The record gives the reactivity of an RNA of 177 nucleotides to DMS and 2A3. Conditions: 150 mM KOAc, 10 mM MgCl2 and 150 mM bicine (pH 8.5), 24 C. Values are in units of 0.01, from 0 to 300, in steps of 10.
RNA sequence: GGGAACGACUCGAGUAGAGUCGAAAAGAAGAAAACAUCAUUGAGUGCAGCGUUGAUGAAACUGAAGUAUUCCAUUUUUCAGCUUCUUUGAAGUCCGGCAAGAUGGGUUCUGGUUGAUUCCAUUGGCAUCAAGCAUUGUGUUCGCACAAUGCUUGAUAAAAGAAACAACAACAACAAC
Reactivity to DMS in 0.01 (KOAc 150mM, MgCl2 10mM, bicine 150mM(pH8.5), 24C), signal-to-noise 4, nucleotides 027 to 126: g000a070a040g000a140a080a080a070c030a020u010c060a070u000u020g010a110g040u010g000c040a060g010c040g020u000u010g000a030u000g000a060a060a100c030u000g010a050a020g010u020a040u040u030c130c160a110u000u020u030u010u020c040a030g000c040u000u000c010u000u010u020g000a060a070g000u010c030c050g010g010c060a030a070g000a040u010g000g010g010u010u000c030u020g000g000u000u000g000a070u010u010c010c000a060u010u030g010g010c180
Reactivity to 2A3 in 0.01 (KOAc 150mM, MgCl2 10mM, bicine 150mM(pH8.5), 24C), signal-to-noise 4, nucleotides 027 to 126: g030a020a000g070a010a070a010a050c030a020u040c010a020u070u150g060a050g080u080g060c040a040g030c050g060u070u050g030a030u040g020a120a030a010c020u040g010a020a010g030u030a110u190u170c070c020a020u080u050u010u070u030c010a000g000c030u000u010c000u060u040u090g060a070a020g020u020c030c000g030g020c030a040a000g010a040u010g020g000g010u030u040c040u100g160g020u100u060g030a060u060u070c020c010a010u040u100g040g000c020